[RMDB]
The record gives the reactivity of an RNA of 177 nucleotides to DMS and 2A3. It was measured as part of the RMDB library OK1LIB.
RNA sequence: GGGAACGACUCGAGUAGAGUCGAAAAUUUGUGACGGGUCACCGUUUUCUUGGGCGUCGUUGCCAUUAAAUGAAGGUGAGACUAUAGUCGUGUGGUGCGCCUUUAUUUAAAGUUUUGGGCGUGCGAGCUAUAUUUAUUUUUUCGAAAAUAAAUAUAGAAAAGAAACAACAACAACAAC
Reactivity to DMS in 0.01 (KOAc 150mM, MgCl2 10mM, bicine 150mM(pH8.5), 24C), signal-to-noise 3, nucleotides 027 to 126: u020u040u030g010u020g000a030c060g000g020g010u040c160a050c040c010g000u000u010u010u000c010u000u000g010g000g020c040g000u000c020g010u000u000g000c070c030a000u000u010a020a010a030u010g000a020a010g010g000u010g000a070g000a040c000u010a060u000a070g010u040c140g030u020g020u010g000g000u000g000c010g010c000c000u000u000u000a010u000u010u020a010a040a020g000u010u010u010u010g000g000g010c010g020u000g000c030g000a050g010
Reactivity to 2A3 in 0.01 (KOAc 150mM, MgCl2 10mM, bicine 150mM(pH8.5), 24C), signal-to-noise 1, nucleotides 027 to 126: u060u050u090g050u040g060a030c000g000g030g070u190c080a060c080c000g030u040u030u030u080c020u020u080g080g030g020c020g030u060c020g040u050u090g010c000c010a010u000u050a010a000a030u040g040a040a000g000g000u030g000a030g050a020c010u020a020u070a150g060u070c060g050u050g010u010g030g020u000g000c000g000c000c000u020u000u030a040u010u030u020a040a010a000g010u080u060u090u070g010g020g000c000g000u010g020c010g010a000g000